[RMDB]
RNA sequence: GGGAACGACUCGAGUAGAGUCGAAAAGAUAUGGAUACCUGAAAUAACGAUUAAGGGAGCUCUCAACUCGGAAACGAGUUACGCGAGAGCGAAGAACUUACGGUCGUUAUUUCAGGUAUCCUAAGUCCUACACAGUAAUGUUCGCAUUACUGUGUAGAAAAGAAACAACAACAACAAC
Reactivity to DMS in 0.01 (KOAc 150mM, MgCl2 10mM, bicine 150mM(pH8.5), 24C), signal-to-noise 7, nucleotides 027 to 126: g000a110u000a300u000g010g010a020u000a010c010c000u000g010a010a020a000u000a010a010c000g010a030u000u010a090a050g000g000g010a120g010c000u000c000u000c020a080a050c000u000c000g000g000a100a100a200c000g010a020g000u000u000a070c300g060c300g000a020g010a020g020c000g000a040a130g010a120a180c010u000u020a050c300g010g010u000c000g010u010u010a000u000u000u000c000a000g000g000u000a000u000c000c000u000a010a040g010u000c040
Reactivity to 2A3 in 0.01 (KOAc 150mM, MgCl2 10mM, bicine 150mM(pH8.5), 24C), signal-to-noise 2, nucleotides 027 to 126: g030a050u180a030u220g000g030a000u030a010c000c010u000g000a000a000a010u020a010a000c010g000a010u000u120a070a060g050g000g000a050g000c010u010c000u010c040a020a020c000u010c000g040g020a050a090a090c010g000a020g020u070u040a050c300g050c230g040a000g020a000g000c020g020a000a040g000a010a040c060u070u110a090c270g100g000u000c010g010u010u000a010u020u000u020c000a010g000g000u000a010u000c010c000u000a010a000g010u000c000